[RMDB]
The data come from the RNA Mapping Database (RMDB), library OK3TST.
An RNA of 207 nucleotides, treated with 2A3 and DMS and read out base by base.
RNA sequence: GGGAACGACUCGAGUAGAGUCGAAAAUCUGAUCUUUCUCUAUGUGGUUGACACAUGCCUGGAGGAAGAUGACCUUCAAGCACUCAAAGAGUCCCUGCAGAUGUCCCUGAGUCUUCUUCCUCCAGAUGCUCUGGUGGGUCUGAUCACAUUUGGAAGAAAAUCCGAAAAUAUUCGUAUUUUCGGAUUUAAAAGAAACAACAACAACAAC
Reactivity to 2A3 in 0.01 (KOAc 150mM, MgCl2 10mM, bicine 150mM(pH8.5), 24C), signal-to-noise 3, nucleotides 027 to 156: u030c010u030g050a040u030c000u020u070u000c050u010c030u060a050u020g010u000g000g030u020u020g030a000c020a000c010a030u070g010c000c000u000g010g000a000g000g000a000a010g010a000u010g010a010c000c030u090u120c080a070a030g020c020a020c030u050c060a190a150a050g060a100g120u090c040c040c020u040g040c070a030g090a300u060g080u150c050c010c020u050g060a060g010u020c000u010u000c000u000u000c030c000u000c010c000a000g000a000u010g000c010u070c070u240g080g030u040g030g030g050u000c050u100g040a000u000c000a000c000a010u020u050u060g030g000a010a010g010a020
Reactivity to DMS in 0.01 (KOAc 150mM, MgCl2 10mM, bicine 150mM(pH8.5), 24C), signal-to-noise 2, nucleotides 027 to 156: u000c010u000g010a140u000c010u020u000u010c000u000c050u000a100u010g020u000g020g020u000u010g010a150c020a020c040a070u000g020c030c010u000g040g030a020g000g010a030a060g010a040u000g010a080c040c020u010u010c030a060a110g010c060a070c020u000c080a050a080a110g030a300g010u000c010c040c010u000g020c110a080g020a140u010g040u010c040c030c010u010g000a100g010u000c030u000u000c020u000u000c010c010u000c020c010a020g000a010u000g020c070u000c090u000g020g020u000g010g020g020u000c030u020g000a040u000c030a050c010a040u000u010u010g000g000a010a040g010a080

The DMS profile rests on 3,057 reads. Conditions: 150 mM KOAc, 10 mM MgCl2 and 150 mM bicine (pH 8.5), 24 C. Values cover nucleotides 27 to 156.